[RMDB]
Source information
Source: RMDB libraries RFM100 and RFMREP, as collected in RNAgym. Structure probing data (DMS and 2A3) for a 177-nucleotide construct.
RNA sequence: GGGAACGACUCGAGUAGAGUCGAAAAACAGAGCACGGUGAUUGUUAACAACAACCCGGGGUGACCCGCGGGCAAGUGCAACAGAAAGUAAACCGCCUAGAAUUUUUCUAGGUAAGGGUGAAACGGUUUAACGAUACCAUUUCGAUGGUAUCGUUAAAAAAGAAACAACAACAACAAC
Reactivity to DMS in 0.01 (KOAc 150mM, MgCl2 10mM, bicine 150mM(pH8.5), 24C), signal-to-noise 3, nucleotides 027 to 126: a090c080a100g020a190g050c010a020c020g040g040u010g000a190u000u000g000u000u020a130a140c160a090a090c050a040a100c020c000c000g000g000g010g000u040g010a160c010c000c010g010c140g000g000g020c060a050a120g010u010g000c050a090a080c080a080g020a090a030a060g000u010a040a100a040c010c000g020c000c000u000a000g040a020a120u000u020u030u010u000c000u000a000g000g030u000a020a040g000g000g000u000g000a060a090a060c120g010g030u000
Reactivity to 2A3 in 0.01 (KOAc 150mM, MgCl2 10mM, bicine 150mM(pH8.5), 24C), signal-to-noise 3, nucleotides 027 to 126: a000c090a010g090a000g050c030a010c010g040g100u130g080a240u060u030g020u070u140a100a030c070a000a000c000a000a030c000c000c000g000g000g000g050u050g070a110c000c000c020g080c110g010g000g040c070a120a070g010u030g050c000a010a000c030a010g080a050a080a000g020u100a060a050a030c000c010g000c000c000u000a020g050a110a110u100u180u170u050u000c000u000a000g000g000u000a010a030g030g010g000u040g050a000a120a000c060g040g000u020
For DMS the reverse transcriptase was MarathonRT. The 2A3 profile rests on 2,055 reads.